[RMDB]
Overview: The record gives the reactivity of an RNA of 177 nucleotides to 2A3 and DMS. Values cover nucleotides 27 to 126. The RNA was probed in 150 mM KOAc, 10 mM MgCl2 and 150 mM bicine (pH 8.5) at 24 C.
RNA sequence: GGGAACGACUCGAGUAGAGUCGAAAAUAUUUUCUAUUUUUUACGGUGGGUUUGGUCGGCCUGAUCGGAUUUAUCAGUCACGUUUUUUAUGCCGAUCAAACAGCACGAAUGAUUGGGUGGGCACCCAUAAUUACCAUAGGUUCGCCUAUGGUAAUUAAAAAGAAACAACAACAACAAC
Reactivity to 2A3 in 0.01 (KOAc 150mM, MgCl2 10mM, bicine 150mM(pH8.5), 24C), signal-to-noise 2, nucleotides 027 to 126: u060a010u000u120u030u040c020u060a300u060u110u080u060u080u150a060c040g050g010u020g000g110g000u030u000u000g000g000u000c000g000g020c020c010u010g020a010u030c000g010g020a010u020u090u170a240u300c060a010g060u010c040a050c240g070u120u040u050u000u030u120a040u120g000c000c000g000a000u010c000a000a000a000c000a010g060c030a000c020g080a060a020u090g120a060u090u090g000g040g020u060g030g220g020c160a020c010c000c000a000
Reactivity to DMS in 0.01 (KOAc 150mM, MgCl2 10mM, bicine 150mM(pH8.5), 24C), signal-to-noise 5, nucleotides 027 to 126: u010a060u000u000u000u000c020u010a010u000u010u010u010u000u000a100c080g010g020u000g000g010g000u000u000u000g010g010u000c000g000g010c010c150u000g000a020u000c030g010g010a050u000u000u010a090u010c270a090g010u000c020a070c040g010u000u000u000u010u010u010a060u020g020c010c000g000a010u000c010a000a010a020c020a090g010c020a030c020g000a100a090u000g010a090u010u000g010g010g020u000g000g010g020c160a160c010c010c010a050